[RMDB]
RNA sequence: GGGAACGACUCGAGUAGAGUCGAAAAUUGUUUAGCACGAUCAGAUAUUACAAUUUGUACUGCUGAAAUUCGAGCAAUACCAUUGUUCAAUGCAGCCUCAACUUGCUGUAAUGUAUGCGCAUUAUUACAUACGGUACCCCUUCGGGGGUACCGUAUGAAAAGAAACAACAACAACAAC
Reactivity to DMS in 0.01 (KOAc 150mM, MgCl2 10mM, bicine 150mM(pH8.5), 24C), signal-to-noise 2, nucleotides 027 to 126: u010u000g020u000u000u010a030g020c040a010c090g030a100u000c070a020g020a070u000a090u010u010a060c120a040a110u000u000u000g000u010a140c300u000g000c000u000g000a030a080a190u000u020c090g010a040g000c020a030a050u000a140c230c250a160u000u000g010u000u000c050a060a080u010g000c000a040g000c040c140u020c110a060a090c100u000u000g010c040u010g010u000a010a070u000g020u010a100u000g020c030g040c090a080u010u040a050u010u000a170